RNA sequence: GGGAACGACUCGAGUAGAGUCGAAAAGAUAUGGAUACGACGAUCGAGAACUACUUCGGCGUCGGAAACGACCGAGAAGCUCGGGAGUAUCCUAAGUCAAACUUAUCGCGGUUCGCCGCGAUAAGAACUUCUAUACGCAGUUCGCUGCGUAUAGAAGAAAAGAAACAACAACAACAAC
Reactivity to DMS in 0.01 (KOAc 150mM, MgCl2 10mM, bicine 150mM(pH8.5), 24C), signal-to-noise 4, nucleotides 027 to 126: g010a030u000a300u000g010g000a010u000a000c000g010a100c240g000a040u010c020g000a040g010a050a090c080u010a300c030u000u000c010g000g020c260g010u000c020g000g010a050a070a150c010g000a060c020c010g010a250g010a030a030g010c010u000c010g000g010g000a080g000u000a020u000c000c000u000a020a060g010u000c040a080a080a140c000u000u000a000u000c010g040c000g010g000u000u010c260g010c010c010g010c000g000a000u000a000a000g000a070a150
Reactivity to 2A3 in 0.01 (KOAc 150mM, MgCl2 10mM, bicine 150mM(pH8.5), 24C), signal-to-noise 4, nucleotides 027 to 126: g020a000u110a040u190g020g000a010u020a010c100g180a090c020g020a300u050c030g010a020g010a140a150c110u220a060c010u230u030c010g090g030c160g040u010c050g020g040a030a080a000c010g080a080c000c010g030a050g000a120a000g000c010u000c010g000g000g020a020g010u000a010u010c000c000u000a140a010g030u040c040a070a040a100c020u010u000a000u020c000g000c010g040g120u060u060c300g020c130c010g000c000g000a000u000a000a000g000a000a010
An RNA of 177 nucleotides, treated with DMS and 2A3 and read out base by base. Reactivities are given for positions 27 through 126. For 2A3 the reverse transcriptase was SuperScript II with manganese. For 2A3, 7,801 sequencing reads were counted. The reactions ran in a buffer of 150 mM KOAc, 10 mM MgCl2 and 150 mM bicine (pH 8.5), at 24 C. It was measured as part of the RMDB library TTRDEL.